Source: RMDB libraries RFM100 and RFMREP, as collected in RNAgym. Chemical mapping of a 177-nucleotide RNA with DMS and 2A3. DMS adducts were read by reverse transcription with MarathonRT. The RNA was probed in 150 mM KOAc, 10 mM MgCl2 and 150 mM bicine (pH 8.5) at 24 C. Reactivities are given for positions 27 through 126.
RNA sequence: GGGAACGACUCGAGUAGAGUCGAAAAAAUAGGAAAAUAGUCCUUGACUGCGUUACGGCGCUUUGGUAGAUAUUGGCUACGGUCGAGAAAUUGCGACUGAUGCCAUCUUAGCUACAUACCCCCGGCUUACCAGACUACAUUUCGAUGUAGUCUGGUAAAAAGAAACAACAACAACAAC
Reactivity to DMS in 0.01 (KOAc 150mM, MgCl2 10mM, bicine 150mM(pH8.5), 24C), signal-to-noise 3, nucleotides 027 to 126: a040a040u040a030g000g000a050a070a100a070u020a210g010u000c000c000u000u000g020a100c050u020g010c030g050u010u030a100c130g010g010c060g000c070u000u010u020g010g000u000a020g010a080u020a010u020u010g030g000c000u000a300c290g000g000u010c000g000a090g010a100a090a180u050u040g000c020g000a010c010u000g000a300u020g000c000c000a000u000c120u000u010a100g000c000u010a030c030a110u050a140c070c040c000c040c030g010g020c190u000
Reactivity to 2A3 in 0.01 (KOAc 150mM, MgCl2 10mM, bicine 150mM(pH8.5), 24C), signal-to-noise 5, nucleotides 027 to 126: a000a010u200a060g010g060a090a060a030a120u170a050g170u020c000c020u020u050g050a050c060u080g010c000g030u020u050a040c150g060g010c010g020c020u070u040u110g070g000u020a010g020a070u050a040u130u110g000g000c000u060a050c060g010g010u010c010g000a000g170a110a160a130u230u210g080c010g000a000c000u010g020a030u090g020c000c000a010u000c000u020u030a000g000c000u010a010c010a080u090a060c000c010c010c000c000g040g010c010u000